[RMDB]
RNA sequence: GGGAACGACUCGAGUAGAGUCGAAAAAAAGAUAUGGAGUAAGGGAGCCACCUGCACACUUGGAUUUAAGCUCGGAAACGAGCUUUGUCAGUGUGCUGGUGGCGAAGAACUUACUCCUAAGUCAAAACCAUUUACCACAGUUCGCUGUGGUAAAUGGAAAAGAAACAACAACAACAAC
Reactivity to DMS in 0.01 (KOAc 150mM, MgCl2 10mM, bicine 150mM(pH8.5), 24C), signal-to-noise 1, nucleotides 027 to 126: a090a100a060g020a010u000a300u000g100g000a030g000u000a010a010g030g060g000a130g040c010c000a000c010c000u010g000c000a020c000a010c000u020u000g040g000a000u000u000u000a010a000g020c010u000c000g000g010a090a130a300c010g000a010g030c000u000u000u000g000u000c000a020g000u000g010u000g020c000u010g000g010u000g000g020c070g010a040a030g010a150a100c000u000u000a030c000u000c010c000u000a010a070g000u000c020a070a080a090a190